[RMDB]
The record gives the reactivity of an RNA of 177 nucleotides to DMS. For DMS, 582 sequencing reads were counted. The data come from the RNA Mapping Database (RMDB), library OK2TST.

RNA sequence: GGGAACGACUCGAGUAGAGUCGAAAAGCUGCUGACGGACAAGCCGGACACGGCGUACCGCUUGCUGAAGCAGAUCGCUGCGGCCGGUGUGAUCGAUCUGUCGAGCACAGCAACCAUCACACUCGUGUCGAAGGCUCGGAUUCGUCCGAGCCUUCGAAAAAGAAACAACAACAACAAC
Reactivity to DMS in 0.01 (KOAc 150mM, MgCl2 10mM, bicine 150mM(pH8.5), 24C), signal-to-noise 1, nucleotides 027 to 126: g000c020u000g020c070u000g000a090c080g010g010a030c020a050a300g020c020c020g020g010a020c010a050c020g020g020c080g000u010a250c070c050g020c000u000u000g040c190u000g000a080a030g000c010a100g000a300u040c050g000c020u000g000c080g000g000c050c000g000g000u000g030u000g000a060u050c070g020a090u000c000u010g000u000c000g020a060g050c140a100c090a030g060c000a050a160c020c010a170u020c120a090c120a100c180u000c090g000u010g000